[RMDB]
RNA sequence: GGGAACGACUCGAGUAGAGUCGAAAAGAUAUGGAUUUCGACGAUCGUCGGCGACCAUCGAUCUCGGAAACGAGGGAGGUCCCGACGGGAGAAAUCCUAAGUCAAAAGCCUCUGUUCGCAGAGGCAAGCUCUAUAUUGGCUUCGGCCAAUAUAGAGCAAAAGAAACAACAACAACAAC
Reactivity to DMS in 0.01 (KOAc 150mM, MgCl2 10mM, bicine 150mM(pH8.5), 24C), signal-to-noise 2, nucleotides 027 to 126: g010a010u000a300u000g000g000a000u000u000u000c020g000a120c120g010a040u000c000g000u000c010g020g020c150g040a010c010c010a270u000c230g010a070u000c000u000c010g000g000a130a080a180c020g010a050g000g010g030a060g010g000u000c020c000c000g000a010c010g000g000g010a020g010a010a010a000u000c000c000u010a010a040g040u000c040a050a130a140a130g010c000c000u020c000u000g020u010u030c230g020c020a010g000a020g010g020c000a000a000
Reactivity to 2A3 in 0.01 (KOAc 150mM, MgCl2 10mM, bicine 150mM(pH8.5), 24C), signal-to-noise 1, nucleotides 027 to 126: g020a010u080a050u190g010g010a020u000u020u010c130g150a270c040g020a110u060c020g020u000c000g040g070c240g020a000c000c010a090u300c020g040a060u000c020u000c010g040g000a090a110a080c000g000a000g010g020g000a010g000g000u000c000c000c000g000a000c000g010g000g010a010g000a000a040a000u000c000c010u010a110a030g050u030c010a000a100a000a210g000c000c000u000c000u010g080u070u160c300g000c170a000g000a000g000g060c000a000a000

Structure probing data (DMS and 2A3) for a 177-nucleotide construct.
The RNA was probed in 150 mM KOAc, 10 mM MgCl2 and 150 mM bicine (pH 8.5) at 24 C.
For DMS, 995 sequencing reads were counted.
It was measured as part of the RMDB library TTRDEL.